[RMDB]
The record gives the reactivity of an RNA of 207 nucleotides to 2A3 and DMS. The RNA was probed in 150 mM KOAc, 10 mM MgCl2 and 150 mM bicine (pH 8.5) at 24 C. The 2A3 profile rests on 2,373 reads. The DMS profile rests on 2,161 reads. Values cover nucleotides 27 to 156. It was measured as part of the RMDB library M2RFPK.

RNA sequence: GGGAACGACUCGAGUAGAGUCGAAAACGAGAAGGGUGUAAAGAUCGCUCUUUUACUCGGCAUGAUACCACCGUUAUCGGGUCAACAGAGUAGUUGCAAAUGACAACAAUGCUCAGGGUUAUGCUCUAAAAGUUCGUACCCUUCGGGGUACGAACAACACCUCUAGCAAGUUCGCUUGCUAGAGGUGAAAAGAAACAACAACAACAAC
Reactivity to 2A3 in 0.01 (KOAc 150mM, MgCl2 10mM, bicine 150mM(pH8.5), 24C), signal-to-noise 4, nucleotides 027 to 156: c040g000a000g000a090a020g040g060g010u050g030u200a140a160a070g140a150u240c030g000c020u010c020u010u040u000u050a090c040u020c010g000g000c000a010u040g020a010u060a130c000c020a020c010c000g140u110u090a060u200c040g000g010g020u040c000a020a020c090a060g010a000g030u070a020g000u020u050g040c060a080a220a300u230g060a090c020a020a000c010a010a150u100g000c020u010c030a020g000g020g010u070u080a040u080g000c020u020c030u160a040a120a020a030g000u000u000c010g000u000a000c000c000c000u000u050c170g000g020g010g000u000a000c000g000a000a010c000a000a000
Reactivity to DMS in 0.01 (KOAc 150mM, MgCl2 10mM, bicine 150mM(pH8.5), 24C), signal-to-noise 1, nucleotides 027 to 156: c030g000a150g030a050a040g010g030g020u000g000u000a100a060a230g010a170u010c000g030c010u000c000u000u000u000u000a060c020u000c020g000g000c010a020u000g020a060u000a030c010c010a150c010c020g010u000u010a020u020c160g010g010g040u000c000a170a170c030a100g020a090g000u010a090g020u000u000g000c030a060a250a220u010g030a170c010a010a030c000a050a030u000g000c020u020c000a110g020g030g030u000u000a140u000g010c020u000c040u000a040a040a170a150g000u000u010c000g070u000a020c000c000c010u000u010c300g020g000g000g000u000a010c010g020a010a000c000a040a170